[RMDB]
RNA sequence: GGGAACGACUCGAGUAGAGUCGAAAAGGCCACAUCUCUGUGUGAAGGAGCAGUAAUUACUAAAGAAAGUGCUAGAAAAGUAACUGACAAGGUGCUCAGCCAAAAGGAUGUCAUUGCGGACUGGGUGAGAGAAAGUCUACUUCGGUAGACUUUCUCUAAAAGAAACAACAACAACAAC
Reactivity to DMS in 0.01 (KOAc 150mM, MgCl2 10mM, bicine 150mM(pH8.5), 24C), signal-to-noise 1, nucleotides 027 to 126: g060g010c050c010a060c030a040u000c050u000c010u040g030u000g060u010g010a100a150g010g010a100g020c100a060g000u000a040a040u010u000a030c030u010a030a030a080g000a090a160a100g010u000g000c100u000a080g000a070a130a050a050g020u010a030a060c050u000g010a070c170a060a060g020g080u000g010c030u000c030a020g040c020c070a030a110a060a070g020g010a090u000g000u000c030a080u000u000g020c120g020g000a070c060u000g000g020g030u010g000

Annotation:
Structure probing data (DMS) for a 177-nucleotide construct. Values cover nucleotides 27 to 126. Source: RMDB library OK2TRN, as collected in RNAgym. High DMS reactivity at an A or C suggests that its Watson-Crick edge is free. The reactions ran in a buffer of 150 mM KOAc, 10 mM MgCl2 and 150 mM bicine (pH 8.5), at 24 C.